[RMDB]
RNA sequence: GGGAACGACUCGAGUAGAGUCGAAAACUUGAGGACCACUUCCGGAGGCUUGCGAACCACUUCUGGUGGCUUGUGGACCACUUCCGGUAUCUUGUGGGCCACUUCCGGUAAGUUGCAGACCACUCCAAAAUACAACCCGUUUCGACGGGUUGUAUUUAAAAGAAACAACAACAACAAC
Reactivity to DMS in 0.01 (KOAc 150mM, MgCl2 10mM, bicine 150mM(pH8.5), 24C), signal-to-noise 2, nucleotides 027 to 126: c090u020u010g000a140g020g020a100c080c040a070c050u000u000c020c010g000g030a030g010g000c090u010u020g020c000g010a060a120c020c040a000c040u000u050c220u070g010g010u000g000g030c150u010u030g020u030g000g040a070c010c060a140c040u020u040c110c090g000g040u050a010u010c180u000u020g010u010g000g020g010c010c000a050c060u000u000c000c020g000g010u030a010a060g010u020u010g020c170a140g000a180c040c010a090c110u010c060c150a030
Reactivity to 2A3 in 0.01 (KOAc 150mM, MgCl2 10mM, bicine 150mM(pH8.5), 24C), signal-to-noise 3, nucleotides 027 to 126: c030u070u140g220a080g050g030a050c000c030a010c010u080u000c000c000g000g020a010g020g050c050u100u120g000c050g050a080a070c000c010a030c040u130u170c120u250g080g000u020g010g030c020u020u060g010u080g070g020a110c010c010a030c050u090u080c050c040g020g000u060a090u030c120u010u110g000u030g000g010g000c020c000a040c050u110u040c030c000g000g000u040a030a100g000u060u030g050c030a030g020a120c020c010a030c040u020c010c040a070